[RMDB]
RNA sequence: GGGAACGACUCGAGUAGAGUCGAAAAUGGUGGCGAGCGACCCGUUGACCCGCGAUGGAGCUUUGGCCCGACUCUCGUCUCACCGGGAGCUCGACGUGCGCGCUUGGCAGGCUGGAUGCGAAACCUCACUGUGAAAAGGCUUCGGCCUUUUCACAGUAAAAGAAACAACAACAACAAC
Reactivity to DMS in 0.01 (KOAc 150mM, MgCl2 10mM, bicine 150mM(pH8.5), 24C), signal-to-noise 2, nucleotides 027 to 126: u000g000g030u010g010g000c000g030a040g000c090g020a090c030c000c040g000u000u000g000a110c100c070c080g000c050g000a060u000g000g010a090g000c080u010u020u000g040g000c020c020c080g050a080c100u020c000u000c000g000u010c170u000c030a030c170c000g000g000g040a300g000c050u000c020g030a090c060g020u010g000c060g000c010g030c010u000u030g000g000c080a090g000g000c100u040g000g000a110u050g000c000g000a070a080a080c020c060u000c120
Reactivity to 2A3 in 0.01 (KOAc 150mM, MgCl2 10mM, bicine 150mM(pH8.5), 24C), signal-to-noise 2, nucleotides 027 to 126: u150g010g010u020g010g030c030g010a030g000c030g030a240c000c000c000g000u010u110g070a100c010c020c010g010c040g000a020u160g050g030a050g020c040u140u060u090g120g010c010c000c030g020a060c040u020c030u030c050g010u000c020u080c100a040c050c000g030g000g000a010g000c040u020c030g080a080c030g040u110g000c020g010c000g030c020u060u090g020g000c030a020g000g040c000u100g020g040a050u060g010c040g080a100a060a080c030c000u020c030